Source information:
An RNA of 177 nucleotides, treated with 2A3 and DMS and read out base by base. 2A3 adducts were read by reverse transcription with SuperScript II with manganese. The RNA was probed in 150 mM KOAc, 10 mM MgCl2 and 150 mM bicine (pH 8.5) at 24 C. The data come from the RNA Mapping Database (RMDB), library RFMREP. For DMS, 1,606 sequencing reads were counted. For 2A3, 2,401 sequencing reads were counted. Reactivities are given for positions 27 through 126.
RNA sequence: GGGAACGACUCGAGUAGAGUCGAAAAAAAGUGCAGUAUUGACUGUCUUCAAACGCACCUGUCCUUGCUCAAGUGCUGGGAUUGUGUGCCAACGGCUAUGAUAGAUAUGAAUAGAGCACGAGAUAAUGUUACUCCUAUUGUUCGCAAUAGGAGUAACAAAAGAAACAACAACAACAAC
Reactivity to 2A3 in 0.01 (KOAc 150mM, MgCl2 10mM, bicine 150mM(pH8.5), 24C), signal-to-noise 3, nucleotides 027 to 126: a000a000a000g040u030g000c020a030g020u040a040u030u090g100a100c040u020g000u040c000u040u030c020a050a040a040c060g000c000a000c000c010u010g010u020c000c000u020u010g010c000u050c160a280a170g110u120g200c000u000g010g000g000a030u010u050g060u020g000u010g150c020c000a110a040c050g120g000c030u110a100u200g030a020u070a090g030a010u060a020u210g050a050a030u020a040g130a020g010c010a010c010g020a020g020a090u250a190a030u100
Reactivity to DMS in 0.01 (KOAc 150mM, MgCl2 10mM, bicine 150mM(pH8.5), 24C), signal-to-noise 2, nucleotides 027 to 126: a040a040a090g040u000g010c040a090g010u020a100u000u000g000a300c120u000g000u000c030u000u000c050a020a070a160c300g000c000a000c010c000u010g000u000c010c000u010u000g000c000u000c140a120a130g010u010g010c010u010g000g000g010a000u000u000g000u000g010u010g000c010c120a070a090c250g020g020c240u010a080u000g020a100u000a030g000a040u000a040u000g000a080a020u000a030g000a210g010c010a010c010g020a130g000a090u000a040a070u010